[RMDB]
RNA sequence: GGGAACGACUCGAGUAGAGUCGAAAAGUGGAUAGUUUCGACUAUCCACACAACUGAUGAUCUUACAGUGGACGAUGAAGAAGAUGGCCAUCGGAUCCUCAAAUAGCACAGAGUUCGCUCUGUGCAAGUUAGAUGUGUCAUUCGUGACACAUCUAACAAAAGAAACAACAACAACAAC
Reactivity to DMS in 0.01 (KOAc 150mM, MgCl2 10mM, bicine 150mM(pH8.5), 24C), signal-to-noise 4, nucleotides 027 to 126: g020u000g000g000a000u010a010g010u000u000u010c180g020a040c000u000a000u000c010c000a010c010a030c190a080a080c060u000g010a050u010g000a040u000c030u000u000a140c150a070g020u000g020g010a070c090g010a130u000g010a100a090g000a090a070g000a070u010g010g010c060c020a020u000c070g010g010a080u000c010c020u000c140a040a080a090u010a110g020c000a010c000a000g010a010g010u000u010c190g010c000u000c000u000g010u000g020c010a000a010
Reactivity to 2A3 in 0.01 (KOAc 150mM, MgCl2 10mM, bicine 150mM(pH8.5), 24C), signal-to-noise 7, nucleotides 027 to 126: g010u010g000g000a000u000a010g000u010u050u130c190g030a020c010u000a000u000c000c000a000c000a000c000a000a010c030u070g030a060u040g010a020u070c030u040u160a070c050a090g040u070g040g060a030c050g060a080u110g080a050a130g050a050a030g090a130u120g070g020c020c010a010u030c020g030g000a040u020c000c010u040c030a090a110a100u180a030g000c000a000c000a000g010a000g020u060u060c160g040c070u000c000u000g000u000g000c000a000a000
Annotation
The record gives the reactivity of an RNA of 177 nucleotides to DMS and 2A3. For DMS, 4,432 sequencing reads were counted. The reactions ran in a buffer of 150 mM KOAc, 10 mM MgCl2 and 150 mM bicine (pH 8.5), at 24 C.